[RMDB]
RNA sequence: GGGAACGACUCGAGUAGAGUCGAAAAACACCGAGAUUCUGAUUCUCUCCUUCCUUUCUCGCCUCUUUCUAAACCUGCUUUCUGGAGAGCACCUGAGAACCUCAAUCACAAGGAAUCCCUGAGUAAAUGUUGGGGUGUUAUUUGCUACUUUCAGGGACAUAGAGAAAGUCUUCGGACUUUCUCUAUGAAAAGAAACAACAACAACAAC
Reactivity to DMS in 0.01 (KOAc 150mM, MgCl2 10mM, bicine 150mM(pH8.5), 24C), signal-to-noise 2, nucleotides 027 to 156: a070c040a090c030c010g030a110g000a070u000u010c000u010g000a140u000u010c040u000c030u000c020c010u000u000c020c010u000u000u000c010u000c020g010c040c010u000c030u020u010u010c030u020a080a070a130c050c020u010g010c030u000u020u010c030u000g010g010a120g010a070g020c040a020c000c020u000g010a110g010a070a050c010c000u000c020a060a100u010c050a100c050a090a110g000g000a110a090u000c000c000c050u000g020a090g000u010a040a090a060u000g020u000u000g010g010g040g020u000g010u010u000a070u010u000u000g010c020u000a090c050u010u010u010c000a060g020g020g030a300
Reactivity to 2A3 in 0.01 (KOAc 150mM, MgCl2 10mM, bicine 150mM(pH8.5), 24C), signal-to-noise 3, nucleotides 027 to 156: a050c050a040c010c060g010a040g000a130u230u170c110u180g030a100u190u020c010u050c010u040c030c020u050u060c010c000u060u080u040c030u010c060g020c020c010u060c020u000u130u080c110u090a110a200a160c010c050u060g030c040u070u100u070c040u080g020g030a060g010a020g060c020a040c020c030u030g010a040g010a120a050c000c000u010c000a070a070u090c020a070c030a120a060g130g010a070a040u030c010c010c000u000g020a020g030u120a060a160a190u160g010u020u030g010g020g010g020u030g030u100u040a090u070u140u060g050c040u000a070c030u080u040u040c000a000g020g010g010a010